RNA sequence: GGGAACGACUCGAGUAGAGUCGAAAACCACAGAUCUUCGGAUCUGUGGAAACAACAAAUACUGUCAGUUGAGACAGACACAAAUACAUUGAGUGUACAAAGAAAGCGAUUGCUUCGGCAAUCGCAACCUUCACUAGGGGUUCGCCCCUAGUGAAGGAAAAGAAACAACAACAACAAC
Reactivity to DMS in 0.01 (KOAc 150mM, MgCl2 10mM, bicine 150mM(pH8.5), 24C), signal-to-noise 1, nucleotides 027 to 126: c000c000a010c000a050g000a020u000c000u000u000c300g020g000a010u000c000u000g020u000g000g000a040a070a080c000a040a070c020a140a060a080u000a120c000u000g010u000c000a160g000u000u020g010a160g000a020c000a020g000a140c140a030c000a090a090a130u000a100c210a050u020u000g000a210g020u000g000u000a030c200a030a060a170g000a080a100a090g000c000g020a010u000u000g010c000u000u000c150g010g030c000a030a010u000c000g000c000a020a010
Reactivity to 2A3 in 0.01 (KOAc 150mM, MgCl2 10mM, bicine 150mM(pH8.5), 24C), signal-to-noise 3, nucleotides 027 to 126: c010c000a000c000a000g000a000u000c000u060u120c180g140g010a010u000c010u000g000u010g000g000a060a130a030c040a040a000c010a000a130a030u190a160c020u000g020u000c030a120g050u180u200g160a090g010a110c010a000g070a050c000a000c010a040a210a010u300a060c070a090u110u210g070a030g060u050g010u030a080c070a030a170a050g110a100a100a010g030c010g010a010u010u000g000c000u040u080c230g050g000c000a000a000u000c000g000c000a000a000

Conditions: 150 mM KOAc, 10 mM MgCl2 and 150 mM bicine (pH 8.5), 24 C. An RNA of 177 nucleotides, treated with DMS and 2A3 and read out base by base. Reactivities are given for positions 27 through 126. 2A3 adducts were read by reverse transcription with SuperScript II with manganese. Source: RMDB library M2PK50, as collected in RNAgym.